[RMDB]
Structure probing data (DMS and 2A3) for a 177-nucleotide construct. For 2A3 the reverse transcriptase was SuperScript II with manganese. The reactions ran in a buffer of 150 mM KOAc, 10 mM MgCl2 and 150 mM bicine (pH 8.5), at 24 C.
RNA sequence: GGGAACGACUCGAGUAGAGUCGAAAAGAGCAUCCUCAUUCGUCGACCAUGUCAAAGAGAUCGCCGAUCGAAUGGUCCAAUAUCAAAAUUAUUUUAAAGAGUUUGUCAAGUAUUCUGCAAGAGCACACGACUGAUAAUAGUUCGCUAUUAUCAGUCGAAAAGAAACAACAACAACAAC
Reactivity to DMS in 0.01 (KOAc 150mM, MgCl2 10mM, bicine 150mM(pH8.5), 24C), signal-to-noise 4, nucleotides 027 to 126: g010a100g000c040a110u000c020c020u010c040a080u000u010c050g010u010c040g020a060c010c050a040u010g010u000c120a060a120a180g020a110g000a050u000c160g020c060c030g010a060u000c030g010a050a030u000g000g010u000c040c040a050a070u000a070u000c050a050a070a080a070u020u010a100u010u000u000u000a080a080a180g010a120g000u010u000u010g010u010c060a030a080g010u010a060u000u010c030u000g000c060a020a100g000a070g010c080a050c110a200
Reactivity to 2A3 in 0.01 (KOAc 150mM, MgCl2 10mM, bicine 150mM(pH8.5), 24C), signal-to-noise 2, nucleotides 027 to 126: g050a020g060c040a080u060c000c080u020c020a100u120u100c050g090u020c010g010a020c000c030a090u150g080u110c100a160a130a080g080a030g020a020u050c040g130c140c060g080a080u040c050g040a080a060u050g030g050u000c030c010a100a070u110a080u120c060a050a080a070a060u150u040a160u060u200u270u300a150a150a010g060a030g010u140u020u110g060u080c010a000a100g020u040a200u070u100c020u030g000c030a080a020g010a010g120c060a030c010a010